[RMDB]
RNA sequence: GGGAACGACUCGAGUAGAGUCGAAAAAAGCGGUAAUGAUUGGUGUAGUUGCACAAUUCGUUGUAAUGCCAAGUAUUGCUUUCUUACUUGUAAAAUUAUUCCAACUGCCGCCUGAUCUUGCUAUUGGGCCUGGAUCUAAGUUCGCUUAGAUCCAGGCAAAAGAAACAACAACAACAAC
Reactivity to 2A3 in 0.01 (KOAc 150mM, MgCl2 10mM, bicine 150mM(pH8.5), 24C), signal-to-noise 1, nucleotides 027 to 126: a000a000g120c090g020g010u110a190a050u090g260a130u040u000g000g060u010g010u070a060g020u030u050g000c030a020c030a110a100u090u110c080g090u110u040g040u070a030a000u000g020c030c010a030a020g030u010a000u030u100g120c000u150u120u080c020u030u080a060c010u010u050g110u180a110a110a120a160u140u020a020u010u160c000c000a020a010c040u030g000c010c000g090c040c010u000g000a020u000c040u050u060g100c080u060a120u290u130g020g030
Reactivity to DMS in 0.01 (KOAc 150mM, MgCl2 10mM, bicine 150mM(pH8.5), 24C), signal-to-noise 1, nucleotides 027 to 126: a040a090g000c020g000g000u010a050a090u020g010a280u000u000g040g000u000g020u000a040g040u000u000g000c230a050c060a080a060u020u040c220g020u000u010g020u000a020a020u000g030c140c040a030a030g020u000a010u010u030g010c240u010u010u000c060u000u000a010c080u000u000g000u000a070a080a040a000u000u000a050u000u000c000c020a000a030c030u000g020c040c030g000c000c050u020g010a080u000c060u000u010g010c120u000a180u010u000g020g010